The record gives the reactivity of an RNA of 177 nucleotides to DMS and 2A3.
RNA sequence: GGGAACGACUCGAGUAGAGUCGAAAAGCCAGCCGGUACCAUCAUUGUACAUCACGAUGGCGUUCGGUGGUAUCGGGUGACCUAGGCGUAGGCGUAGCGUUACCGUCUCGCGGAACUGGUGCCUUGGGCAGUCUCAUUGUUUCGACAAUGAGACUGCAAAAGAAACAACAACAACAAC
Reactivity to DMS in 0.01 (KOAc 150mM, MgCl2 10mM, bicine 150mM(pH8.5), 24C), signal-to-noise 3, nucleotides 027 to 126: g010c020c000a060g020c030c020g000g000u000a000c020c000a040u000c000a140u000u000g030u000a050c030a040u020c190a120c200g010a300u010g000g010c030g000u000u000c090g030g000u010g000g000u010a000u000c020g040g000g030u000g000a060c010c010u000a140g000g010c020g020u000a080g000g010c010g030u000a140g010c170g000u000u000a110c220c060g030u000c020u020c040g000c030g000g000a150a150c070u000g000g080u000g010c080c030u010u010g000g010
Reactivity to 2A3 in 0.01 (KOAc 150mM, MgCl2 10mM, bicine 150mM(pH8.5), 24C), signal-to-noise 2, nucleotides 027 to 126: g010c020c000a010g090c000c010g010g010u010a010c010c010a010u050c000a040u060u200g050u090a140c010a020u010c060a030c210g180a040u040g000g000c020g040u080u080c150g000g000u000g000g000u010a000u010c020g000g000g030u040g020a050c010c010u020a020g140g000c000g020u070a050g060g000c020g020u060a020g090c090g150u140u120a130c100c000g040u030c020u020c050g010c000g000g100a110a050c020u030g030g000u090g030c010c010u050u080g080g050
For DMS the reverse transcriptase was MarathonRT. 2A3 adducts were read by reverse transcription with SuperScript II with manganese. The DMS profile rests on 2,117 reads.